An RNA of 177 nucleotides, treated with DMS and read out base by base.
RNA sequence: GGGAACGACUCGAGUAGAGUCGAAAAAAGUGGGAGGCGGCCCAUGAGGCGGAGCAGUUGAGAGCCUACCUGGAUGGCACGUGCGUGGAGUGGCUCCGCAGAUACCUGGAGAACGGGAAGGAGACGCCAAAACGGUGACUUUCGAGUCACCGUUUUGAAAAGAAACAACAACAACAAC
Reactivity to DMS in 0.01 (KOAc 150mM, MgCl2 10mM, bicine 150mM(pH8.5), 24C), signal-to-noise 2, nucleotides 027 to 126: a000a110g000u000g010g000g000a150g020g020c070g020g010c020c020c040a090u000g020a180g010g000c040g000g000a080g040c070a080g010u000u020g020a090g010a180g030c030c020u000a180c080c050u000g000g000a130u010g010g000c070a020c160g020u000g020c080g040u020g010g020a160g040u010g000g050c020u000c020c010g030c000a060g000a120u000a060c070c030u020g000g000a130g030a150a100c100g000g000g000a110a110g000g010a040g020a040c120g010c120